[RMDB]
RNA sequence: GGGAACGACUCGAGUAGAGUCGAAAAUAAUCUACGAAUUCUAGAUUCAAUGAUAGUUAAUCCUCUUCUACCAUGAAGGUCUUUUGGGUUUUCUUCUAAAUGAUCUCUGAUAUUUACUGCUCAACUACGUACGUGGAGUCUUCGGACUCCACGUACGAAAAGAAACAACAACAACAAC
Reactivity to 2A3 in 0.01 (KOAc 150mM, MgCl2 10mM, bicine 150mM(pH8.5), 24C), signal-to-noise 2, nucleotides 027 to 126: u140a020a040u030c040u120a080c120g040a100a130u220u050c000u060a060g040a120u030u040c090a060a100u160g020a100u060a010g010u050u130a070a030u000c000c000u050c000u070u000c020u020a110c010c010a100u230g000a120a030g000g020u010c060u010u120u000u120g000g000g000u100u040u000u000c020u000u000c030u050a100a060a150u140g020a080u000c050u000c020u050g060a050u040a120u180u110u130a140c010u030g090c000u000c070a020a160c050u100a070